This 177-nucleotide RNA was probed chemically with DMS and 2A3.
RNA sequence: GGGAACGACUCGAGUAGAGUCGAAAACAAAGUUAGGCAUCACAAAGUACAGCAUCGUGACCAACAGCAACGAUUCCGUCACACUGCGCCUCAUGACUGAGCAUGACCUUGCGAUGCUCUAUGAGUGAAUGACAUACCUGUUCGCAGGUAUGUCAUUAAAAGAAACAACAACAACAAC
Reactivity to DMS in 0.01 (KOAc 150mM, MgCl2 10mM, bicine 150mM(pH8.5), 24C), signal-to-noise 7, nucleotides 027 to 126: c060a080a110a100g000u000u000a040g020g010c030a040u020c020a030c060a040a060a050g010u000a100c080a130g000c030a060u010c090g010u000g010a050c130c090a080a090c100a060g010c100a040a060c100g000a130u000u000c110c080g020u010c070a050c090a100c070u010g000c060g010c180c090u000c030a040u000g010a110c180u000g000a070g010c070a070u010g000a080c070c050u000u010g020c040g020a010u000g000c000u010c040u000a010u000g000a150g000u000g010
Reactivity to 2A3 in 0.01 (KOAc 150mM, MgCl2 10mM, bicine 150mM(pH8.5), 24C), signal-to-noise 4, nucleotides 027 to 126: c030a000a080a030g060u090u070a030g050g000c030a020u030c010a030c020a030a070a020g020u070a100c020a030g020c020a030u070c050g020u020g030a040c010c040a030a090c020a050g110c030a050a060c070g090a070u160u090c050c040g020u020c010a020c000a010c050u050g000c010g030c030c000u020c010a030u070g110a080c070u070g010a030g020c030a050u070g040a090c000c020u030u030g000c030g010a010u000g000c020u060c020u110a050u090g050a040g110u120g080